Background
This 177-nucleotide RNA was probed chemically with DMS. DMS adducts were read by reverse transcription with MarathonRT. For DMS, 2,082 sequencing reads were counted. The data come from the RNA Mapping Database (RMDB), library TTRINS. Conditions: 150 mM KOAc, 10 mM MgCl2 and 150 mM bicine (pH 8.5), 24 C.

RNA sequence: GGGAACGACUCGAGUAGAGUCGAAAAGAUAUGGAGAGCGGGAGUGCGCCCGAAAUGAACUACGAGCGCACCAUCGGAAACGAUGGGAUCUCGCAUUUCGGGCGCACGAAGAACGCUCUCCUAAGUCGUAUGUAAACGAGUUCGCUCGUUUACAUACAAAAGAAACAACAACAACAAC
Reactivity to DMS in 0.01 (KOAc 150mM, MgCl2 10mM, bicine 150mM(pH8.5), 24C), signal-to-noise 2, nucleotides 027 to 126: g020a130u000a300u000g020g010a020g020a050g030c010g000g000g000a130g060u000g000c020g010c000c000c010g010a010a010a010u010g020a110a120c160u030a300c010g020a000g010c180g000c300a170c000c000a000u000c000g000g000a180a100a180c010g020a000u010g000g000g000a130u000c010u000c000g000c000a010u000u000u000c000g010g000g000c000g000c000a000c000g000a050a140g000a110a300c010g000c010u000c000u000c000c010u000a030a080g000u000c070